[RMDB]
RNA sequence: GGGAACGACUCGAGUAGAGUCGAAAAAGAGUUGGACCGAUGUCGAAAGACGUUUCGAAAUGCACAUCGACCACAUGUGCAACUUCCUGACCAUUAACCAGGAACUGGACUGUUUGCUAAUGGACGAGCUAUGCGUAGCCUUCGGGCUACGCAUAGCAAAAGAAACAACAACAACAAC
Reactivity to DMS in 0.01 (KOAc 150mM, MgCl2 10mM, bicine 150mM(pH8.5), 24C), signal-to-noise 1, nucleotides 027 to 126: a030g060a060g010u000u010g000g000a200c090c000g000a070u000g000u000c000g030a070a120a130g030a040c090g000u000u000u000c040g000a100a100a160u000g000c010a030c040a050u000c170g010a200c030c060a030c190a090u000g030u000g020c040a040a030c200u000u000c030c020u000g000a190c090c010a000u000u000a020a030c090c020a000g000g000a020a080c080u040g010g000a070c120u000g010u000u000u000g020c050u000a080a070u000g000g000a300c110g000a130